Background
This 177-nucleotide RNA was probed chemically with 2A3. The reactions ran in a buffer of 150 mM KOAc, 10 mM MgCl2 and 150 mM bicine (pH 8.5), at 24 C. 2A3 adducts were read by reverse transcription with SuperScript II with manganese. The data come from the RNA Mapping Database (RMDB), library OK1LIB.
RNA sequence: GGGAACGACUCGAGUAGAGUCGAAAACCAGCCGGCGGUCCAGCCGUUCCUUGCGGUCGUUGGUGAUCCCGACCCAGACCACGGUUCCGACGAUGAGCACCGGAAUCGCGGCGCCGAUGGCUGUCGCGCUCCCGGCCGGAUUCGUCCGGCCGGGAGCAAAAGAAACAACAACAACAAC
Reactivity to 2A3 in 0.01 (KOAc 150mM, MgCl2 10mM, bicine 150mM(pH8.5), 24C), signal-to-noise 2, nucleotides 027 to 126: c000c000a010g010c030c020g020g000c010g000g000u110c060c000a020g010c010c030g000u080u040c010c030u040u130g080c080g000g010u030c000g070u070u080g000g020u050g070a110u140c020c000c000g030a060c040c000c040a090g010a120c010c080a010c020g010g000u030u050c010c020g000a080c000g070a190u180g090a010g020c040a020c010c060g000g000a010a000u000c030g000c020g010g000c000g000c020c000g120a140u050g000g010c040u090g070u070c030g000c020